[RMDB]
RNA sequence: GGGAACGACUCGAGUAGAGUCGAAAAGAUAUGGACCUGUCGUCGCAGAGCGUGAGGUUCGGAAACGAACCGAACGCGACGAAGCGACGAGCAGGUCCUAAGUCAAAUCCAUUGUUCGCAAUGGAAACGUCUUACUGUAGUUCGCUACAGUAAGACGAAAAGAAACAACAACAACAAC
Reactivity to DMS in 0.01 (KOAc 150mM, MgCl2 10mM, bicine 150mM(pH8.5), 24C), signal-to-noise 3, nucleotides 027 to 126: g000a040u000a300u000g030g000a020c000c000u000g010u000c000g000u000c010g060c010a050g020a150g030c000g030u000g020a300g000g010u000u000c010g040g000a060a130a220c000g020a020a000c010c000g010a250a030c030g020c000g000a100c260g000a110a100g000c010g000a020c010g010a050g010c000a000g000g010u010c000c010u000a000a060g000u000c030a110a180a140u000c000c000a010u010u010g010u010u020c240g040c010a030a000u000g010g010a010a110a120
Reactivity to 2A3 in 0.01 (KOAc 150mM, MgCl2 10mM, bicine 150mM(pH8.5), 24C), signal-to-noise 2, nucleotides 027 to 126: g050a010u100a050u130g000g000a000c010c000u020g020u040c010g010u000c000g000c030a010g020a020g110c020g010u010g020a050g000g000u040u000c030g030g000a080a070a030c010g000a010a000c000c000g010a010a000c010g000c010g010a060c010g020a090a010g000c000g000a010c000g010a050g000c000a000g020g000u000c000c000u010a000a010g000u020c020a000a010a110u000c000c000a020u030u040g050u050u110c300g000c180a020a000u010g000g000a080a070a080